[RMDB]
RNA sequence: GGGAACGACUCGAGUAGAGUCGAAAAUGUGCGGCUCUACGCGUAUUUAUAUCCGUGUUAUGCGUAGGUCGCAGUCGCAUGCACUGCCAUGCGACGCGGUGGAGCAGGAGGUAGCUUCGCCCACUGAAGUCUGUGGACCAUUCGUGGUUCACGGGCUAAAAGAAACAACAACAACAAC
Reactivity to 2A3 in 0.01 (KOAc 150mM, MgCl2 10mM, bicine 150mM(pH8.5), 24C), signal-to-noise 9, nucleotides 027 to 126: u290g040u060g010c010g010g000c030u030c010u240a000c000g000c000g010u010a060u020u250u040a260u050a080u100c090c100g090u120g030u140u030a020u040g000c000g000u010a000g010g000u000c000g000c000a000g000u000c000g000c000a000u010g000c080a110c300u210g050c110c000a000u000g000c000g000a000c010g000c040g000g000u010g000g040a160g020c110a150g030g130a040g070g090u190a060g080c000u000u010c010g000c000c000c000a030c020u050g050a040
Reactivity to DMS in 0.01 (KOAc 150mM, MgCl2 10mM, bicine 150mM(pH8.5), 24C), signal-to-noise 9, nucleotides 027 to 126: u030g010u010g010c000g000g000c000u050c010u000a000c000g000c000g020u000a010u020u030u040a090u030a090u050c160c170g010u020g010u010u000a010u000g000c000g010u000a010g000g010u000c000g010c000a010g010u000c000g010c000a000u000g000c030a240c200u020g010c100c000a010u000g000c000g010a000c010g010c100g010g020u000g010g000a090g010c010a130g010g010a070g000g010u040a120g010c000u000u000c010g000c000c000c030a050c030u010g000a170